[RMDB]
RNA sequence: GGGAACGACUCGAGUAGAGUCGAAAAAGCACGGUUUUUGAGGACGCAUUUUGUCCGUGCGGUAAUGCCCUCCUUUACACUUUCUCGCAUGGUGCGGGAGUAUGGAGAGGAAACAAAAGCUAGUCUCGAUAGGCGGUUAACUUCGGUUAACCGCCAACUCUGGGUAUGCGUUCGCGCAUACCCAGAGAAAAGAAACAACAACAACAAC
Reactivity to 2A3 in 0.01 (KOAc 150mM, MgCl2 10mM, bicine 150mM(pH8.5), 24C), signal-to-noise 1, nucleotides 027 to 156: a000g000c000a000c000g000g000u000u010u000u000u010g080a040g040g020a020c030g020c140a170u010u010u000u020g000u010c000c000g000u010g000c000g070g040u150a010a010u280g010c000c000c000u020c010c000u040u110u070a020c090a020c050u080u130u060c000u000c000g020c030a110u270g260g000u260g100c000g000g000g000a020g000u010a010u040g000g000a020g030a050g020g020a010a010a010c000a000a000a000a000g050c010u010a010g030u000c000u000c000g070a190u060a110g020g000c010g000g000u000u000a000a000c000u000u040c110g020g000u000u000a000a000c020c000g000c000c000a000a000